[RMDB]
Annotation:
This 177-nucleotide RNA was probed chemically with DMS.

RNA sequence: GGGAACGACUCGAGUAGAGUCGAAAAGAUAUGGAUUACUAGGAUCGUGUGAAGAGCGAUAAGUCCUGGGUCGGAAACGACCCAAGGACUUUUGACGCUCUACACACGAUCCUAGUAAUCCUAAGUCGAAAACACGAUAGUUCGCUAUCGUGUUUUCAAAAGAAACAACAACAACAAC
Reactivity to DMS in 0.01 (KOAc 150mM, MgCl2 10mM, bicine 150mM(pH8.5), 24C), signal-to-noise 1, nucleotides 027 to 126: g000a110u000a300u010g000g000a020u000u000a010c000u010a000g030g000a010u050c000g020u000g040u020g000a110a020g010a000g040c000g010a140u000a060a000g010u010c000c000u030g010g020g040u000c000g020g000a140a100a250c010g030a020c000c000c000a060a020g030g000a020c020u000u000u000u020g000a190c100g060c000u000c000u000a060c000a000c000a010c020g010a000u000c000c000u000a000g000u000a000a000u000c000c000u000a020a060g000u010c090
Conditions: 150 mM KOAc, 10 mM MgCl2 and 150 mM bicine (pH 8.5), 24 C.